RNA sequence: GGGAACGACUCGAGUAGAGUCGAAAAGGAUCAUCGGGGUGUAGAAAAUGUAUUUCCAAAACAAAGUGUGGAGUAGGAUACGGAGUAUCCGGAUACACGCCGAUGGGAGACGUCAUCUGUUCUCCGAAUACUCGGUAAUAUUCGUAUUACCGAGUAUAAAAGAAACAACAACAACAAC
Reactivity to 2A3 in 0.01 (KOAc 150mM, MgCl2 10mM, bicine 150mM(pH8.5), 24C), signal-to-noise 9, nucleotides 027 to 126: g050g010a070u090c000a000u000c010g010g000g020g010u000g000u020a040g090a050a140a030a040u150g050u080a090u040u140u010c010c000a030a060a050a050c100a060a230a050g110u140g060u060g090g010a020g020u060a060g010g020a010u010a030c070g130g030a160g040u020a020u010c000c000g000g020a010u010a010c010a000c080g090c010c000g000a000u010g000g020g000a030g000a010c040g060u060c030a130u030c090u080g040u110u020c030u000c020c000g020a050
Reactivity to DMS in 0.01 (KOAc 150mM, MgCl2 10mM, bicine 150mM(pH8.5), 24C), signal-to-noise 9, nucleotides 027 to 126: g010g010a150u010c010a020u000c010g010g000g010g050u000g010u000a010g000a110a060a110a110u010g010u010a040u000u000u000c010c000a040a080a100a140c190a100a100a150g010u000g010u010g000g000a040g010u000a120g010g000a020u000a020c010g020g020a180g010u000a010u000c000c000g000g010a190u000a010c010a000c010g000c010c010g000a020u000g000g000g000a060g010a050c080g000u000c110a100u010c120u000g010u000u000c030u000c010c050g000a150

This 177-nucleotide RNA was probed chemically with 2A3 and DMS. For 2A3, 22,581 sequencing reads were counted. It was measured as part of the RMDB library OK2TST. High DMS reactivity at an A or C suggests that its Watson-Crick edge is free. The RNA was probed in 150 mM KOAc, 10 mM MgCl2 and 150 mM bicine (pH 8.5) at 24 C. Values cover nucleotides 27 to 126. DMS adducts were read by reverse transcription with MarathonRT.